The data come from the RNA Mapping Database (RMDB), library M2PK50. The record gives the reactivity of an RNA of 177 nucleotides to 2A3 and DMS. DMS adducts were read by reverse transcription with MarathonRT. The RNA was probed in 150 mM KOAc, 10 mM MgCl2 and 150 mM bicine (pH 8.5) at 24 C.
RNA sequence: GGGAACGACUCGAGUAGAGUCGAAAAGGAUGCUCGUUCGCGAGCAUCCACUGAGAUAGCCACUAUAAAGAUUAAGUCUUCCUACUCGAGACAGGAUGACUAUGCUCCUGGCCUUCGGGCCAGGAAACACCAGUAAAAUCUUCGGAUUUUACUGGUGAAAAGAAACAACAACAACAAC
Reactivity to 2A3 in 0.01 (KOAc 150mM, MgCl2 10mM, bicine 150mM(pH8.5), 24C), signal-to-noise 3, nucleotides 027 to 126: g010g000a000u020g000c000u000c020g030u050u080c190g010c010g100a000g000c000a000u010c000c000a000c000u030g030a020g060a050u080a030g110c040c030a070c040u120a070u140a300a160a030g080a070u140u200a110a030g020u010c020u030u010c010c000u040a060c020u030c120g120a110g040a080c070a020g050g000a060u050g000a010c050u040a100u120g030c000u020c010c000u000g040g000c000c000u020u050c200g060g000g000c040c000a000g010g000a000a000a000
Reactivity to DMS in 0.01 (KOAc 150mM, MgCl2 10mM, bicine 150mM(pH8.5), 24C), signal-to-noise 2, nucleotides 027 to 126: g010g010a010u010g000c000u000c000g020u000u010c190g020c000g030a010g010c010a000u000c000c000a020c100u000g010a120g010a090u010a060g000c040c080a080c150u010a120u010a120a070a090g010a070u000u000a070a080g000u000c010u010u000c030c010u000a070c050u000c100g010a060g020a120c110a060g010g010a060u000g010a060c020u000a070u020g020c150u000c000c000u000g000g000c000c000u010u000c200g020g000g040c000c010a000g000g000a010a030a160